Background:
Source: RMDB library M2RFPK, as collected in RNAgym. Structure probing data (2A3) for a 207-nucleotide construct. The reactions ran in a buffer of 150 mM KOAc, 10 mM MgCl2 and 150 mM bicine (pH 8.5), at 24 C. 2A3 is a SHAPE reagent: it acylates the 2'-hydroxyl of flexible nucleotides of all four kinds.
[RMDB]
RNA sequence: GGGAACGACUCGAGUAGAGUCGAAAAAUCAGCCUUCGUUCUGUACACGGGGUUGGAUCCGACUCUCAUAGGCUCUCCAACCCAACUCCUACUCAAUACGUCCUCGUCGUACAGAACGGUAACAUGUAAAACGAAGGCUGCUUCGGCAGCCUUCGAAGUUAGGUAGUUGGUUCGCCAACUACCUAACAAAAGAAACAACAACAACAAC
Reactivity to 2A3 in 0.01 (KOAc 150mM, MgCl2 10mM, bicine 150mM(pH8.5), 24C), signal-to-noise 2, nucleotides 027 to 156: a000u100c040a010g100c030c020u090u140c020g000u000u000c000u000g000u000a000c000a000c000g010g000g000g030u000u030g040g010a040u300c000c010g070a060c030u100c030u040c040a160u230a190g000g000c030u050c000u010c040c000a000a010c000c000c000a010a010c010u010c020c040u080a080c010u020c090a070a140u100a300c090g040u040c030c050u060c010g010u030c060g000u000a000c000a000g000a000a000c000g000g010u030a030a020c040a070u180g060u300a030a090a000a000c000g020a000a010g060g020c000u000g020c020u000u000c050g140g000c000a000g000c000c000u000u000c000g000a000a000